[RMDB]
RNA sequence: GGGAACGACUCGAGUAGAGUCGAAAACUUCAAGAGUAUGCCUUUGGAGAAAGAUGGAUUCUGUGAAAAAGGCUGAAAGGGGAGCGUCGCCGAAGCAAAUAAAACCCCAUCGGUAUUAUUUGCUGGCGUACUACCAUAGUUUCGACUAUGGUAGUACAAAAGAAACAACAACAACAAC
Reactivity to 2A3 in 0.01 (KOAc 150mM, MgCl2 10mM, bicine 150mM(pH8.5), 24C), signal-to-noise 8, nucleotides 027 to 126: c010u060u040c030a040a020g010a010g050u040a020u050g010c000c000u020u010u020g030g000a040g010a030a050a030g050a020u050g030g010a050u060u000c030u020g300u010g110a000a020a000a000a000g000g000c000u010g000a020a010a010g050g010g010g000a020g020c030g070u070c040g040c040c010g100a100a000g000c000a000a010a000u010a000a030a010a010c020c030c000c010a040u050c020g000g000u020a040u060u000a010u000u020u010g010c010u010g020g020c040
Reactivity to DMS in 0.01 (KOAc 150mM, MgCl2 10mM, bicine 150mM(pH8.5), 24C), signal-to-noise 9, nucleotides 027 to 126: c030u000u010c050a050a080g010a100g010u010a090u000g000c000c000u000u000u000g010g000a090g010a030a030a070g000a040u000g000g010a300u010u000c010u000g000u030g010a080a080a010a020a020g000g000c000u000g000a050a120a170g010g000g000g010a030g000c080g010u010c040g010c020c020g010a120a040g000c000a000a000a010u000a000a010a090a030c010c020c100c170a030u010c080g010g010u000a060u000u000a010u000u000u000g010c000u010g000g010c150